[RMDB]
RNA sequence: GGGAACGACUCGAGUAGAGUCGAAAAGCGCAGAAGCGCCGGCCAACUACGUGCAAGCAGCCCGCUGUAAGACGUAGGGCGCGAGCGUUGUCCGGAUUUAUUGGGCGUAAAGAGCUCCGUAGGCGGCAAUUAUAUAAUAUUUCGAUAUUGUAUAAUUAAAAGAAACAACAACAACAAC
Reactivity to DMS in 0.01 (KOAc 150mM, MgCl2 10mM, bicine 150mM(pH8.5), 24C), signal-to-noise 9, nucleotides 027 to 126: g000c010g010c010a090g010a140a130g010c020g010c000c040g020g010c080c100a060a300c000u000a000c010g010u000g010c070a040a200g000c000a040g000c040c060c160g010c010u000g000u020a110a220g000a060c060g000u000a040g010g010g010c000g010c010g000a170g010c010g010u000u010g000u010c010c000g010g010a140u020u020u010a040u020u020g000g000g000c010g000u030a050a110a170g010a210g010c010u000c020c030g010u010a030g010g000c120g000g000c070
Reactivity to 2A3 in 0.01 (KOAc 150mM, MgCl2 10mM, bicine 150mM(pH8.5), 24C), signal-to-noise 3, nucleotides 027 to 126: g040c020g000c010a010g010a220a050g000c010g000c010c010g020g060c040c000a020a020c010u020a000c010g020u040g120c010a030a020g000c000a010g010c010c010c020g010c000u010g020u040a070a000g010a010c010g000u030a080g050g020g000c000g000c010g030a010g000c010g000u000u010g010u000c000c000g010g020a020u050u110u040a080u110u110g010g010g000c000g010u010a010a040a050g080a030g010c010u000c000c000g030u010a010g020g020c000g000g000c000
Structure probing data (DMS and 2A3) for a 177-nucleotide construct. Reactivities are given for positions 27 through 126. It was measured as part of the RMDB library OK1LIB. The RNA was probed in 150 mM KOAc, 10 mM MgCl2 and 150 mM bicine (pH 8.5) at 24 C.